[RMDB]
RNA sequence: GGGAACGACUCGAGUAGAGUCGAAAACACCUGCCAUAGGUCAGCUUUCCCCAGCGAAGCUAAUUCCGGCACUAGCAUUUGGGGCAAUAUUAUAUCCAGGAGCUAUCCAUUCUUACGACGCCAUGAAUGAAUCAACCUUGUUCGCAAGGUUGAUUCAAAAAGAAACAACAACAACAAC
Reactivity to 2A3 in 0.01 (KOAc 150mM, MgCl2 10mM, bicine 150mM(pH8.5), 24C), signal-to-noise 5, nucleotides 027 to 126: c050a040c000c010u030g020c020c000a100u090a130g060g000u060c040a010g030c040u020u080u080c000c000c010c010a010g020c060g070a160a010g010c010u060a120a110u190u030c020c000g050g000c020a000c110u010a010g000c020a090u080u040u160g030g000g020g040c020a010a030u100a090u200u180a130u020a040u080c040c010a030g050g000a030g020c010u030a040u080c020c010a040u050u030c020u050u040a030c050g010a020c010g030c010c010a080u110g070a080a060
Reactivity to DMS in 0.01 (KOAc 150mM, MgCl2 10mM, bicine 150mM(pH8.5), 24C), signal-to-noise 2, nucleotides 027 to 126: c120a100c030c000u020g000c100c050a060u000a040g000g000u000c090a170g000c060u000u000u010c010c020c000c040a100g000c020g000a080a070g010c000u000a150a150u020u000c020c040g000g000c080a050c060u000a030g000c040a170u020u020u020g000g000g040g000c120a110a030u030a050u020u010a010u010a100u010c050c020a070g020g000a120g000c080u000a050u010c020c060a100u000u000c120u000u020a100c040g000a030c110g000c020c020a100u030g000a100a110
Source: RMDB library OK1LIB, as collected in RNAgym. Chemical mapping of a 177-nucleotide RNA with 2A3 and DMS. The DMS profile rests on 2,159 reads. The RNA was probed in 150 mM KOAc, 10 mM MgCl2 and 150 mM bicine (pH 8.5) at 24 C. 2A3 adducts were read by reverse transcription with SuperScript II with manganese.